[RMDB]
RNA sequence: GGGAACGACUCGAGUAGAGUCGAAAAAAGACUAAUCGAACCAUCUAGUAGCUGGUUCCCUCCGAAAUUUCCCUCAGGAUAGCAGCAACUUAUUUACGAUAGUUUUAUGAGGUAAAGCGAAUGAUUAGAUACGUGUUUUAUUCGUAAAACACGUAUCAAAAGAAACAACAACAACAAC
Reactivity to 2A3 in 0.01 (KOAc 150mM, MgCl2 10mM, bicine 150mM(pH8.5), 24C), signal-to-noise 9, nucleotides 027 to 126: a000a010g110a040c060u080a080a060u070c050g010a020a020c010c010a020u030c020u030a070g060u080a020g120c020u010g060g000u040u020c000c010c000u020c010c000g050a070a050a060u030u030u010c010c000c000u020c070a020g030g010a040u060a050g060c030a010g010c000a030a050c020u070u060a050u120u120u060a050c070g080a110u050a100g040u010u010u020u070a080u060g030a030g040g020u140a070a050a010g060c050g050a070a090u100g080a080u080u110a030
Reactivity to DMS in 0.01 (KOAc 150mM, MgCl2 10mM, bicine 150mM(pH8.5), 24C), signal-to-noise 7, nucleotides 027 to 126: a070a060g010a140c090u010a080a060u010c050g010a070a060c050c040a040u000c050u000a120g010u020a110g020c080u000g000g000u000u000c010c030c020u020c020c020g020a040a060a120u010u010u000c010c010c020u010c110a110g000g000a060u020a070g000c040a050g010c100a070a050c050u010u000a040u000u000u010a070c050g000a100u010a050g010u010u010u010u010a040u010g010a040g000g010u010a030a130a080g010c050g000a100a080u030g010a080u010u000a110

About this RNA
Chemical mapping of a 177-nucleotide RNA with 2A3 and DMS. The RNA was probed in 150 mM KOAc, 10 mM MgCl2 and 150 mM bicine (pH 8.5) at 24 C. 2A3 adducts were read by reverse transcription with SuperScript II with manganese.